RNA sequence: GGGAACGACUCGAGUAGAGUCGAAAAGAUAUGGAUAGGUCCCGUCGAUUCAUUAGACAUGCUCAAACCUUCGGAAACGAAGGGUAGAGCAACAGCUAAUGAGAUCGACGGGACCUAUCCUAAGUCACAGUUGGUCUAUGUUCGCAUAGACCAACUGAAAAGAAACAACAACAACAAC
Reactivity to DMS in 0.01 (KOAc 150mM, MgCl2 10mM, bicine 150mM(pH8.5), 24C), signal-to-noise 1, nucleotides 027 to 126: g000a040u000a300u000g000g000a000u000a000g000g000u000c000c000c010g020u000c000g020a000u030u000c000a010u010u000a000g000a080c130a200u000g010c010u000c000a040a150a300c000c010u000u010c000g010g000a110a110a290c000g010a010a010g000g000g000u000a280g030a040g010c010a020a020c200a100g000c000u000a010a000u000g000a010g040a060u020c000g000a000c000g000g000g000a000c000c000u030a000u000c000c000u000a000a120g030u000c030a250